Record summary
Chemical mapping of a 177-nucleotide RNA with DMS. Conditions: 150 mM KOAc, 10 mM MgCl2 and 150 mM bicine (pH 8.5), 24 C.
[RMDB]
RNA sequence: GGGAACGACUCGAGUAGAGUCGAAAAAACUGGCUCUCCCUUAGCCAUCCGAGGUAGGACGUCCGUCCUCCUUCGGAUGCCCAGGUCGGACCGCGAGGAGGUGGAGAUGCCAUGCCGACCCGAAGAGGCUACCUCACUAGUUCGCUAGUGAGGUAGCAAAAGAAACAACAACAACAAC
Reactivity to DMS in 0.01 (KOAc 150mM, MgCl2 10mM, bicine 150mM(pH8.5), 24C), signal-to-noise 1, nucleotides 027 to 126: a010a060c000u000g010g000c030u000c020u000c020c000c050u020u020a050g030c240c020a020u000c000c010g020a060g030g030u000a010g020g010a030c000g010u000c300c180g040u000c000c010u010c080c000u000u000c030g030g000a000u000g010c060c050c000a090g020g000u010c080g030g000a190c040c080g000c150g000a080g000g020a060g010g010u000g000g000a090g090a030u030g040c010c020a000u020g030c030c030g000a100c050c000c030g020a050a150g000a110g030